[RMDB]
RNA sequence: GGGAACGACUCGAGUAGAGUCGAAAAGAAUAAAAGGCGAAACUCUCUCGACGCCGAAGCUACGAAAUCUCAGAAAUGAGAUGAAACGUGUGUAUGAAAAUGCACACGGAAGAGAGAAAGUAGCGAAGGGUUCAUACAAGUUCGCUUGUAUGAACCCAAAAGAAACAACAACAACAAC
Reactivity to DMS in 0.01 (KOAc 150mM, MgCl2 10mM, bicine 150mM(pH8.5), 24C), signal-to-noise 2, nucleotides 027 to 126: g010a080a170u050a080a070a160a100g040g000c040g000a140a120a140c060u000c060u010c000u020c000g030a130c100g000c000c080g010a190a120g020c040u010a040c050g000a090a150a030u030c000u020c010a020g000a080a090a170u000g000a010g010a020u010g010a020a040a040c000g000u000g000u000g020u000a000u000g010a120a000a100a030u000g010c040a000c010a000c000g020g000a110a110g010a230g050a080g000a090a060a110g000u000a020g000c010g000a090a070
Reactivity to 2A3 in 0.01 (KOAc 150mM, MgCl2 10mM, bicine 150mM(pH8.5), 24C), signal-to-noise 3, nucleotides 027 to 126: g130a060a040u160a210a130a010a000g030g020c050g010a130a170a170c070u010c000u000c000u030c060g030a020c010g010c070c000g010a020a000g020c010u030a000c030g030a060a120a140u010c020u000c000a000g050a110a100a080u060g030a020g000a010u070g020a050a100a000c000g000u000g020u000g020u000a000u070g110a030a010a010a040u030g000c000a000c000a000c000g010g020a150a050g030a000g000a000g000a030a050a020g040u010a000g010c020g030a130a080